[RMDB]
RNA sequence: GGGAACGACUCGAGUAGAGUCGAAAAGCUGCGCGAAACCUCGCUGUUUUCUUGGCUAACUUUCAGCGAGGUGAGGCAAGGCGGCAAAAAAAAGUUGGGAGCAGCAACGGCAAGCAAAAAAAAAGUUACAAGUUGCGAUGGUUCGCCAUCGCAACAAGCCAUAGCAUAACUUCGGUUAUGCUAUGGCAAAAGAAACAACAACAACAAC
Reactivity to 2A3 in 0.01 (KOAc 150mM, MgCl2 10mM, bicine 150mM(pH8.5), 24C), signal-to-noise 1, nucleotides 027 to 156: g000c020u010g010c050g000c010g080a100a030a020c000c000u000c000g000c000u010g000u030u000u000u000c100u170u220g090g000c060u030a010a020c000u020u000u000c010a000g000c010g000a000g000g000u000g010a000g000g030c010a000a020g070g000c030g000g000c030a130a120a000a000a000a000a030a010g060u080u060g020g020g020a050g040c040a000g010c020a030a020c040g030g000c020a010a030g010c080a060a090a000a020a010a000a000a000a010g030u030u030a020c020a080a090g000u000u000g000c000g000a010u000g030g000u000u020c100g020c050c000a000u020c010g000c000a000a000c000a000a010
Chemical mapping of a 207-nucleotide RNA with 2A3. For 2A3 the reverse transcriptase was SuperScript II with manganese. Source: RMDB library M2RFPK, as collected in RNAgym. The RNA was probed in 150 mM KOAc, 10 mM MgCl2 and 150 mM bicine (pH 8.5) at 24 C. Reactivities are given for positions 27 through 156.